[RMDB]
RNA sequence: GGGAACGACUCGAGUAGAGUCGAAAACACGUGGAGGAGGGCCCGCCGGAGGUUCGUCUCCACCACCACCGGCACGAAGGCAUCGGCCCCGCUCGAACUCUUGGAGAUGGACGCGGCGUCCUUCACCCGAAAACAACGAUUUCGAUCGUUGUUUUCGAAAAGAAACAACAACAACAAC
Reactivity to 2A3 in 0.01 (KOAc 150mM, MgCl2 10mM, bicine 150mM(pH8.5), 24C), signal-to-noise 2, nucleotides 027 to 126: c100a020c060g080u140g000g010a040g010g020a030g000g040g090c040c090c030g000c030c020g090g090a200g080g090u030u010c010g000u010c020u000c000c010a020c020c000a020c020c000a070c010c000g030g000c040a030c170g120a070a080g060g000c030a120u190c100g170g020c010c020c010c020g020c000u110c040g060a130a070c010u030c020u200u140g010g010a000g000a020u020g010g000a000c010g000c000g070g000c000g020u010c000c000u010u010c020a040c020c030
Reactivity to DMS in 0.01 (KOAc 150mM, MgCl2 10mM, bicine 150mM(pH8.5), 24C), signal-to-noise 2, nucleotides 027 to 126: c060a150c130g010u010g000g010a060g000g020a060g000g020g020c130c210c050g020c000c050g010g020a160g020g000u000u000c020g000u000c020u000c010c020a080c110c050a030c060c080a070c090c060g000g000c020a100c100g000a080a100g010g000c090a130u000c100g010g000c000c000c050c040g000c050u010c070g000a080a090c140u000c060u020u000g020g000a020g010a020u000g010g000a010c020g000c030g000g010c050g010u000c010c000u000u000c010a050c020c080
Source: RMDB library OK2TRN, as collected in RNAgym. Chemical mapping of a 177-nucleotide RNA with 2A3 and DMS. For 2A3, 2,622 sequencing reads were counted. Values cover nucleotides 27 to 126. The DMS profile rests on 2,077 reads. 2A3 adducts were read by reverse transcription with SuperScript II with manganese.